This 177-nucleotide RNA was probed chemically with 2A3 and DMS.
High DMS reactivity at an A or C suggests that its Watson-Crick edge is free.
DMS adducts were read by reverse transcription with MarathonRT.

RNA sequence: GGGAACGACUCGAGUAGAGUCGAAAAGAUAUGGAGGGCCACUCAAGCGAAGAACUCGGAAACGAGGGAGCUUGAGUGCCCUCCUAAGUCAAAGCACAACAUAAAUGUUCGCAUUUAUGUUGUGCAACGAAUAGACUUGGUUCGCCAAGUCUAUUCGAAAAGAAACAACAACAACAAC
Reactivity to 2A3 in 0.01 (KOAc 150mM, MgCl2 10mM, bicine 150mM(pH8.5), 24C), signal-to-noise 3, nucleotides 027 to 126: g020a020u060a030u160g010g010a020g040g000g040c200c010a020c010u010c000a000a020g020c020g270a300a020g010a100a050c000u000c010g000g030a070a060a040c010g000a000g000g000g020a010g000c000u010u000g000a000g000u000g000c010c000c000u000c010c000u010a000a000g010u000c010a010a060a000g000c000a000c010a000a000c000a000u020a000a020a000u040g030u100u130c300g020c180a010u000u000u010a000u010g000u010u010g010u000g000c000a010a000
Reactivity to DMS in 0.01 (KOAc 150mM, MgCl2 10mM, bicine 150mM(pH8.5), 24C), signal-to-noise 4, nucleotides 027 to 126: g010a030u000a300u000g000g000a010g010g000g000c150c060a020c010u000c010a000a010g010c010g020a100a170g000a120a160c010u000c000g000g000a130a090a220c040g000a010g000g010g010a080g010c000u010u000g000a010g010u000g010c010c000c010u000c000c000u000a000a040g000u000c040a090a130a130g000c020a000c000a000a010c000a000u000a000a010a000u000g010u000u010c240g020c010a010u000u000u000a010u000g000u000u010g010u000g000c010a020a030